[RMDB]
RNA sequence: GGGAACGACUCGAGUAGAGUCGAAAAAAAAAGAUAUGGAACCUGUAGAGAGGUGGUGAAGAAGGUACAUCGGAAACGAUGUACUGUAAAGCCACUACCCACCUCUACUGGUUCCUAAGUCAAAAAACAAGUCUAAUGUGUUCGCACAUUAGACUUGAAAAGAAACAACAACAACAAC
Reactivity to DMS in 0.01 (KOAc 150mM, MgCl2 10mM, bicine 150mM(pH8.5), 24C), signal-to-noise 1, nucleotides 027 to 126: a020a130a050a130a170g020a030u000a040u000g000g000a030a010c010c000u000g080u010a010g000a000g000a230g020g000u010g000g000u000g010a040a080g060a180a300g000g000u000a000c010a000u000c000g060g010a040a000a010c000g000a010u000g000u000a000c000u000g000u020a000a110a300g000c000c010a000c000u000a060c080c030c160a300c050c000u000c000u000a000c020u000g000g040u000u000c000c000u010a000a030g000u030c040a010a060a060a030a030a140
The record gives the reactivity of an RNA of 177 nucleotides to DMS. It was measured as part of the RMDB library TTRDES. For DMS, 827 sequencing reads were counted. Values cover nucleotides 27 to 126. The RNA was probed in 150 mM KOAc, 10 mM MgCl2 and 150 mM bicine (pH 8.5) at 24 C.